An RNA of 177 nucleotides, treated with 2A3 and DMS and read out base by base. The DMS profile rests on 1,722 reads.
RNA sequence: GGGAACGACUCGAGUAGAGUCGAAAAAGGUGCAGCAAGGGCUACUUUGGAUAUGGCCGGAGAGCGGUGCAGAUGCCUGGUUGGAGGCAUCAGCAACAUCGCCAGACACUGUGCCUGAGAUGGUGGACUGUCCGAUAUCGUUCGCGAUAUCGGACAGAAAAGAAACAACAACAACAAC
Reactivity to 2A3 in 0.01 (KOAc 150mM, MgCl2 10mM, bicine 150mM(pH8.5), 24C), signal-to-noise 1, nucleotides 027 to 126: a000g000g020u030g000c010a020g000c080a000a160g110g020g000c000u030a080c080u160u080u230g090g000a050u060a070u250g060g000c000c060g040g000a120g050a010g020c010g000g000u030g080c020a040g030a040u010g010c000c020u160g020g190u160u130g180g110a010g000g000c000a010u000c000a020g060c000a000a100c010a000u080c000g000c000c000a010g070a020c080a000c030u000g010u020g040c000c000u040g000a100g010a070u090g070g130u060g020g010a030
Reactivity to DMS in 0.01 (KOAc 150mM, MgCl2 10mM, bicine 150mM(pH8.5), 24C), signal-to-noise 2, nucleotides 027 to 126: a080g020g000u000g020c000a010g000c050a110a180g000g000g030c040u000a020c170u000u020u010g010g020a160u000a130u010g010g030c000c030g000g020a150g010a150g030c010g020g010u000g020c010a090g020a020u000g000c010c000u000g000g000u020u010g010g000a080g010g030c000a010u000c020a050g030c140a090a070c050a050u010c000g010c000c020a130g010a130c140a050c010u010g020u000g010c000c010u000g020a040g000a050u010g010g020u000g000g000a230